Annotation
Structure probing data (2A3) for a 207-nucleotide construct. The reactions ran in a buffer of 150 mM KOAc, 10 mM MgCl2 and 150 mM bicine (pH 8.5), at 24 C. It was measured as part of the RMDB library M2RFPK.
[RMDB]
RNA sequence: GGGAACGACUCGAGUAGAGUCGAAAAACGGUGCGGAAGUUCGCGCUUCCGUGAAACGCGAAAAUCGGACGGUGGCUGCAAGUCGCAUCGCAAAACCGCGGCAAGUGGAGUCAGCGAGAGGAGGCUGAAACCAUCCAACACUUCGGUGUUGGAUGAACAGCAUGGCUAGUUUCGACUAGCCAUGCUGAAAAGAAACAACAACAACAAC
Reactivity to 2A3 in 0.01 (KOAc 150mM, MgCl2 10mM, bicine 150mM(pH8.5), 24C), signal-to-noise 1, nucleotides 027 to 156: a000c030g050g020u020g040c000g020g050a050a050g040u080u150c110g020c000g040c050u000u010c000c020g000u010g020a070a100a000c100g010c020g050a060a050a000a100u140c050g010g010a000c070g040g030u030g000g060c000u180g020c050a050a050g080u050c000g000c020a020u040c020g000c070a050a050a000a000c020c010g000c030g070g000c060a040a220g030u070g090g010a040g060u020c010a010g000c010g070a080g020a040g050g030a010g000g030c010u020g020a120a010a010c020c000a000u000c000c000a000a000c000a000c000u010u100c170g170g000u000g000u010u000g000g000a000u000g000a080a010